Chemical mapping of a 177-nucleotide RNA with 2A3. The reactions ran in a buffer of 150 mM KOAc, 10 mM MgCl2 and 150 mM bicine (pH 8.5), at 24 C.
RNA sequence: GGGAACGACUCGAGUAGAGUCGAAAACAUUCAUGACUUUUCCAGAUGUUGCAUACAUAACUUUUUUUAUUUGUAUUCGAACUAGUCCAAGCCGAUUCUCAAAAUCAUAUAAAAUCAUUUACACCUUCAAUUGCACUUGAUUCGUCAAGUGCAAUUGAAAAGAAACAACAACAACAAC
Reactivity to 2A3 in 0.01 (KOAc 150mM, MgCl2 10mM, bicine 150mM(pH8.5), 24C), signal-to-noise 5, nucleotides 027 to 126: c030a040u100u120c020a080u100g110a100c040u110u060u040u020c040c000a010g000a120u070g050u060u060g030c040a020u040a050c000a030u070a070a120c070u160u120u060u030u020u030u110a130u080u090u020g040u020a050u010u070c010g010a020a010c030u020a040g030u000c010c000a030a020g010c020c020g100a140u100u010c020u010c050a080a120a070a090u080c070a020u030a000u090a130a160a090a060u080c010a010u030u060u080a040c050a020c020c000u010u010
Source information: It was measured as part of the RMDB libraries RFM100 and RFMREP.